[RMDB]
RNA sequence: GGGAACGACUCGAGUAGAGUCGAAAAAUCAGCCUUCGAUCUGUAAACGGGGUUGGAUCCGACUCUCAUAGGCUCUCCAACCCAACUCCUACUCAAUACGUCCUCGUCGUACAGAACGGUAACAUGUAAAACGAAGGCUGCUUCGGCAGCCUUCGAACAUUUACUGCUAGUUCGCUAGCAGUAAAUGAAAAGAAACAACAACAACAAC
Reactivity to DMS in 0.01 (KOAc 150mM, MgCl2 10mM, bicine 150mM(pH8.5), 24C), signal-to-noise 1, nucleotides 027 to 156: a160u000c050a110g000c070c070u000u000c060g000a080u000c030u000g000u000a030a110a100c060g030g020g020g000u000u000g000g000a100u010c040c010g000a080c040u010c060u010c140a190u000a120g000g010c000u000c030u000c030c020a080a020c030c020c010a060a030c020u000c030c000u000a060c000u000c060a070a110u010a060c060g030u010c000c000u000c030g030u000c060g070u010a120c050a050g000a060a100c050g010g000u000a060a110c080a090u000g010u000a030a050a080a120c010g020a040a010g000g020c000u000g050c000u000u010c140g050g030c000a010g000c000c000u020u000c000g000a020a090
Reactivity to 2A3 in 0.01 (KOAc 150mM, MgCl2 10mM, bicine 150mM(pH8.5), 24C), signal-to-noise 4, nucleotides 027 to 156: a000u050c020a010g020c010c040u150u100c050g140a190u040c020u040g070u100a070a120a110c080g020g010g000g010u010u010g010g010a080u300c000c000g130a120c060u080c050u020c130a170u190a160g000g000c000u010c010u000c010c000a010a000c000c000c010a000a010c000u020c010c010u020a030c010u010c040a020a120u070a170c010g010u010c000c000u010c020g030u000c020g000u010a060c020a060g040a090a020c000g060g020u100a100a040c070a180u140g050u130a040a080a030a010c010g000a000a010g000g000c000u000g000c000u040u030c040g090g000c000a000g000c000c000u000u000c000g000a000a000
The data come from the RNA Mapping Database (RMDB), library M2RFPK. Chemical mapping of a 207-nucleotide RNA with DMS and 2A3. DMS adducts were read by reverse transcription with MarathonRT. Conditions: 150 mM KOAc, 10 mM MgCl2 and 150 mM bicine (pH 8.5), 24 C. Reactivities are given for positions 27 through 156. For 2A3 the reverse transcriptase was SuperScript II with manganese.